[RMDB]
RNA sequence: GGGAACGACUCGAGUAGAGUCGAAAAGAUCCGUUCGCGGAUCUCCUGGCGUACUACUGGAGGAAGUCCCUUUCGAUAAGGUAAUCCCAAAUAGGAUUACCUUUUGACGAAACCACUUCUACCCACCCAGUAUCGCUUAGUCACUGUUCGCAGUGAACGGCAAUAGUAUAUUCGUAUACUAUUGCCGAAAAGAAACAACAACAACAAC
Reactivity to DMS in 0.01 (KOAc 150mM, MgCl2 10mM, bicine 150mM(pH8.5), 24C), signal-to-noise 3, nucleotides 027 to 156: g010a000u000c010c010g010u000u000c230g010c020g050g000a020u000c000u000c020c060u000g010g010c000g020u000a110c150u010a030c000u000g010g000a300g000g000a040a030g020u000c050c030c010u000u000u010c000g010a180u000a010a010g010g020u010a010a000u000c000c000c000a070a210a240u010a040g020g010a020u010u000a000c010c000u000u000u000u020g020a260c110g000a040a020a040c020c020a020c010u010u000c000u000a150c010c020c040a300c140c010c000a060g000u010a030u000c020g000c020u000u010a070g010u000c010a020c010u000g000u010u000c220g010c030a060g030u010g000a040a300
Reactivity to 2A3 in 0.01 (KOAc 150mM, MgCl2 10mM, bicine 150mM(pH8.5), 24C), signal-to-noise 5, nucleotides 027 to 156: g010a000u010c020c020g010u050u070c300g020c020g080g010a000u010c010u020c000c010u010g040g000c020g010u070a110c060u000a000c000u030g030g000a030g020g020a020a010g010u020c030c010c040u000u020u000c000g000a000u000a000a000g020g020u010a000a010u030c010c040c090a280a300a150u300a190g000g000a000u010u000a000c000c000u000u000u000u010g020a020c000g000a000a000a010c080c080a000c000u030u010c000u060a150c040c040c040a040c020c010c000a010g000u010a060u300c010g000c000u050u110a040g020u030c000a000c010u000g040u100u080c260g010c140a020g000u030g030a040a040
Source: RMDB library RNAMAK, as collected in RNAgym. An RNA of 207 nucleotides, treated with DMS and 2A3 and read out base by base. For DMS, 6,151 sequencing reads were counted. The 2A3 profile rests on 5,064 reads.